Chemical mapping of a 177-nucleotide RNA with DMS and 2A3. Reactivities are given for positions 27 through 126. Conditions: 150 mM KOAc, 10 mM MgCl2 and 150 mM bicine (pH 8.5), 24 C. The 2A3 profile rests on 1,251 reads. It was measured as part of the RMDB library OK2TST.

RNA sequence: GGGAACGACUCGAGUAGAGUCGAAAAGUUAUUGGCGUCGGUUCAGGGCGCAGCUUAAAGGCCGCCAUCGAUGAGUUGCCUGAUGUUGAACGGCCGCAACAUAGCUGUGUAUCAUUGAUAGGGGCCAGUAGUAUCGACGAUUCGUCGUCGAUACUACAAAAGAAACAACAACAACAAC
Reactivity to DMS in 0.01 (KOAc 150mM, MgCl2 10mM, bicine 150mM(pH8.5), 24C), signal-to-noise 2, nucleotides 027 to 126: g000u010u010a110u020u010g010g020c020g050u000c020g010g010u000u010c130a190g000g000g030c020g000c010a040g020c080u010u000a050a220a140g030g010c010c020g050c020c000a040u010c020g030a060u010g000a090g020u000u010g010c070c040u000g010a040u010g010u000u000g020a110a110c040g010g010c010c020g000c070a050a020c080a060u010a040g000c060u030g010u010g000u000a160u010c020a040u000u000g000a050u010a140g030g000g000g000c010c000a070
Reactivity to 2A3 in 0.01 (KOAc 150mM, MgCl2 10mM, bicine 150mM(pH8.5), 24C), signal-to-noise 2, nucleotides 027 to 126: g070u080u040a140u210u300g110g000c060g190u000c020g080g140u190u160c040a010g000g060g000c010g010c010a000g030c000u050u130a100a050a100g020g000c030c050g130c100c030a010u020c020g080a060u100g030a020g170u120u170g150c040c000u010g010a020u010g030u070u040g090a210a060c070g060g000c050c010g030c010a000a040c040a070u070a050g070c090u060g030u030g000u140a080u130c030a060u010u030g020a020u050a070g010g010g030g000c000c020a000